[RMDB]
RNA sequence: GGGAACGACUCGAGUAGAGUCGAAAAUUCUUGCGGUCACCUUGUCCAGAACCCCGACGUGUUUGAUGGCAAGUGCUGGCUCUCCUGCUUUUUGGGCCAGUCGGUCGAAGUGCGCUGCCAUGAGGAAAUGCGACCCACAGUUCGCUGUGGGUCGCAUAAAAGAAACAACAACAACAAC
Reactivity to 2A3 in 0.01 (KOAc 150mM, MgCl2 10mM, bicine 150mM(pH8.5), 24C), signal-to-noise 1, nucleotides 027 to 126: u070u030c040u050u150g020c030g000g000u000c000a060c000c000u050u050g000u000c010c010a050g050a130a100c000c000c000c000g090a090c080g020u070g270u000u000u300g080a110u000g000g000c000a070a000g000u000g000c000u000g000g010c000u060c000u000c050c000u170g110c080u000u250u140u090u110g050g000g000c080c000a050g020u110c010g050g000u050c000g010a120a000g030u000g180c020g000c170u050g070c020c040a090u080g000a030g080g210a040a220
Background: The record gives the reactivity of an RNA of 177 nucleotides to 2A3. For 2A3 the reverse transcriptase was SuperScript II with manganese. The 2A3 profile rests on 358 reads. Values cover nucleotides 27 to 126.